The record gives the reactivity of an RNA of 177 nucleotides to 2A3 and DMS. It was measured as part of the RMDB library OK2TST. Values cover nucleotides 27 to 126. 2A3 adducts were read by reverse transcription with SuperScript II with manganese. The reactions ran in a buffer of 150 mM KOAc, 10 mM MgCl2 and 150 mM bicine (pH 8.5), at 24 C. For DMS, 855 sequencing reads were counted.
[RMDB]
RNA sequence: GGGAACGACUCGAGUAGAGUCGAAAAGCAGUCCACUGCAUCUCUGCUUUGUUUUGAUGCUAAAUGAUAACGCAGGAACAAUCUAGGAAAUGCAGGGACAAAAAUGGAGCAGAGACUGAAGGAAAAACCAGUAAUGAUGCUUCGGCAUCAUUACUGGAAAAGAAACAACAACAACAAC
Reactivity to 2A3 in 0.01 (KOAc 150mM, MgCl2 10mM, bicine 150mM(pH8.5), 24C), signal-to-noise 2, nucleotides 027 to 126: g090c040a000g000u000c020c010a260c130u000g010c000a050u000c000u020c000u020g040c010u070u030u000g090u090u050u020u070g210a200u030g000c020u040a090a170a170u260g090a130u090a160a020c060g010c020a010g040g010a020a010c020a020a000u030c040u170a030g080g040a090a020a010u020g000c010a040g020g000g010a000c000a020a020a020a000a000u050g020g010a020g000c030a010g000a000g020a090c040u090g010a080a080g030g020a060a060a080a000a060
Reactivity to DMS in 0.01 (KOAc 150mM, MgCl2 10mM, bicine 150mM(pH8.5), 24C), signal-to-noise 1, nucleotides 027 to 126: g000c050a090g010u000c000c010a090c000u000g000c030a110u000c070u020c030u000g000c140u020u000u000g000u000u000u000u000g000a070u020g020c020u000a070a150a130u030g010a150u010a120a200c290g000c010a060g000g000a050a110c010a010a020u000c100u000a200g000g000a030a000a070u000g000c000a030g000g000g030a050c020a050a050a010a060a080u010g010g000a080g030c070a020g000a080g010a010c060u020g000a040a080g000g010a130a060a010a080a160